[RMDB]
Notes
The record gives the reactivity of an RNA of 177 nucleotides to 2A3.
RNA sequence: GGGAACGACUCGAGUAGAGUCGAAAAUGUACUGAUCUAAAUGAAAAAUGUUUCUCUUCCUAAUAAUCGCAGGUCCUUCAAUGGACAUUAUCUGCCAUUAUCAGUCGAAGAUCGAACGUUUAACCAACCGAGUACGCAAGUUCGCUUGCGUACUCGGAAAAGAAACAACAACAACAAC
Reactivity to 2A3 in 0.01 (KOAc 150mM, MgCl2 10mM, bicine 150mM(pH8.5), 24C), signal-to-noise 1, nucleotides 027 to 126: u290g000u030a120c120u090g090a180u110c090u150a050a070a030u120g150a040a050a050a050a050u000g110u000u000u000c030u000c000u000u000c000c000u000a000a000u000a000a000u000c000g000c000a000g010g000u000c010c000u270u060c140a300a300u260g000g000a030c000a000u120u080a140u030c000u000g000c020c000a000u000u000a000u010c010a020g110u050c080g020a000a000g000a040u110c180g000a000a000c000g000u000u000u000a140a010c000c000a010a090